[RMDB]
RNA sequence: GGGAACGACUCGAGUAGAGUCGAAAACUGAUGGCCGUUAUGGCCUGCAACUUUGAUUUGGAAUCACUUGAUAUAGCACUGUUCUCAGGUGACGACUCCUUAUUGGUAGGGGACAAGAACCUGUUGAAAUCUUGGUACGGUUCGCCGUACCAAGAUUAAAAGAAACAACAACAACAAC
Reactivity to DMS in 0.01 (KOAc 150mM, MgCl2 10mM, bicine 150mM(pH8.5), 24C), signal-to-noise 3, nucleotides 027 to 126: c030u010g000a110u020g010g010c010c000g010u000u110a020u050g000g010c000c000u000g010c240a020a130c050u000u000u010g000a020u020u010u040g000g000a130a070u010c040a060c040u000u000g010a100u010a140u010a100g030c130a140c140u000g010u000u000c030u000c000a000g010g020u000g010a140c300g000a130c060u000c000c000u000u000a120u020u020g000g040u030a000g000g000g000g000a150c070a110a190g010a210a040c010c020u010g070u000u000g030a060
Reactivity to 2A3 in 0.01 (KOAc 150mM, MgCl2 10mM, bicine 150mM(pH8.5), 24C), signal-to-noise 3, nucleotides 027 to 126: c080u110g060a070u110g100g000c000c010g070u300u230a160u300g030g000c000c000u000g000c000a030a030c010u150u020u240g090a090u000u020u200g030g010a080a070u000c000a070c050u050u020g040a040u060a050u090a280g110c100a090c110u170g040u130u020c020u000c000a000g000g020u040g080a100c010g110a070c030u000c010c000u000u190a150u130u220g210g050u140a070g030g020g060g100a060c050a040a010g030a070a040c000c020u050g040u030u040g060a060